Structure probing data (2A3) for a 177-nucleotide construct.
The 2A3 profile rests on 802 reads.
Conditions: 150 mM KOAc, 10 mM MgCl2 and 150 mM bicine (pH 8.5), 24 C.

[RMDB]
RNA sequence: GGGAACGACUCGAGUAGAGUCGAAAAAUCCAUUCGCUGAGUACGCUGCUCUGACCUUCUUCCCAGUCUCGGUUCCUGUUCUGGGAGCUUGGGGCUGAGUAGCCACCAGCCCUGCUCUCUGCAGUGUAGCUUCGCAUCGUUUCGACGAUGCGAAGCUAAAAGAAACAACAACAACAAC
Reactivity to 2A3 in 0.01 (KOAc 150mM, MgCl2 10mM, bicine 150mM(pH8.5), 24C), signal-to-noise 1, nucleotides 027 to 126: a000u000c000c000a010u090u060c080g020c000u010g010a020g060u020a040c060g000c040u030g000c000u000c000u000g150a190c000c000u050u080c000u080u000c030c000c010a030g080u000c000u000c030g000g100u050u030c000c050u070g030u170u080c010u060g000g000g000a000g010c000u090u220g030g000g000g040c000u000g000a000g000u000a010g020c020c000a010c000c000a000g000c010c020c000u060g000c000u020c010u000c000u080g010c020a020g000u030g060u150